[RMDB]
An RNA of 207 nucleotides, treated with 2A3 and DMS and read out base by base. Source: RMDB library OK3TST, as collected in RNAgym. The DMS profile rests on 2,268 reads. For DMS the reverse transcriptase was MarathonRT.
RNA sequence: GGGAACGACUCGAGUAGAGUCGAAAAAUUUUUCAGCUUCAGGCGGAGAAGUGGAACCACGCAGGGAUUUACGUUGGAAACAAUAAUAUCUUGCAUCACGCCUUCGGCAAGCUAUCGCGCCGGGAUAUUUAUUCCGGCUGGUACGAACAGCACAAAGAGUCUGUAAACAUUUCGAUGUUUACAGACUAAAAGAAACAACAACAACAAC
Reactivity to 2A3 in 0.01 (KOAc 150mM, MgCl2 10mM, bicine 150mM(pH8.5), 24C), signal-to-noise 1, nucleotides 027 to 156: a000u060u050u060u070u110c030a000g010c010u020u000c050a000g000g030c000g070g020a090g010a110a010g030u070g060g060a100a050c090c020a010c120g000c000a020g000g030g050a040u090u070u100a050c060g020u030u030g040g030a100a050a010c030a030a010u050a060a020u050a050u090c030u010u000g000c020a020u010c040a020c020g030c000c000u020u040c000g000g030c030a040a020g000c000u010a010u090c020g010c000g000c090c000g000g000g000a030u010a120u030u260u080a020u100u000c000c000g000g010c000u000g030g000u070a010c000g000a060a030c020a040g030c040a010c010a110a040a050g200
Reactivity to DMS in 0.01 (KOAc 150mM, MgCl2 10mM, bicine 150mM(pH8.5), 24C), signal-to-noise 1, nucleotides 027 to 156: a090u000u020u010u000u000c030a170g000c040u010u000c130a080g030g010c020g070g030a120g040a080a080g010u030g050g020a090a100c040c010a060c040g010c010a110g030g020g000a130u000u010u000a050c100g040u010u000g030g010a250a050a170c070a040a130u000a040a090u010a100u010c030u010u010g000c030a250u000c060a030c050g020c020c050u000u000c020g030g000c060a080a130g000c060u000a050u000c010g000c080g050c000c010g010g010g020a010u000a080u000u000u010a080u020u000c010c000g030g050c000u000g020g090u020a040c070g000a040a100c020a050g000c040a140c030a050a080a140g000